[RMDB]
RNA sequence: GGGAACGACUCGAGUAGAGUCGAAAAUACUCGAUCCAUGCGGAUCCAUGCAUGCGCGAUCAGCUAGCAGCGUAUAUACUAGUAUCGAUACUAGGCUAGCGAUCCGAUCACACUAGUAGAGAGAUAGCCAUUGAUCUAUGUUCGCAUAGAUCAAUGGAAAAGAAACAACAACAACAAC
Reactivity to DMS in 0.01 (KOAc 150mM, MgCl2 10mM, bicine 150mM(pH8.5), 24C), signal-to-noise 8, nucleotides 027 to 126: u010a080c040u000c050g010a050u000c020c020a070u010g010c060g010g000a100u010c090c100a080u010g000c040a050u010g020c170g000c130g010a030u000c020a110g030c000u000a010g000c030a150g010c180g010u010a060u000a100u000a290c070u000a040g010u000a130u010c220g000a120u000a020c010u010a060g010g000c010u010a010g000c010g000a020u000c020c030g000a050u000c060a110c150a070c070u010a080g010u000a050g000a140g010a100g000a120u010a100g010
Reactivity to 2A3 in 0.01 (KOAc 150mM, MgCl2 10mM, bicine 150mM(pH8.5), 24C), signal-to-noise 7, nucleotides 027 to 126: u100a010c030u010c060g020a010u000c010c010a020u070g010c030g070g080a060u000c070c030a070u170g010c020a000u030g000c020g050c130g070a010u010c020a070g000c000u000a000g000c030a020g010c050g150u070a100u020a010u020a260c040u020a020g060u020a060u200c140g060a030u030a080c010u010a020g090g010c000u000a000g000c000g010a000u000c000c010g010a010u040c020a020c030a010c090u100a040g060u150a030g040a000g010a000g030a180u090a050g050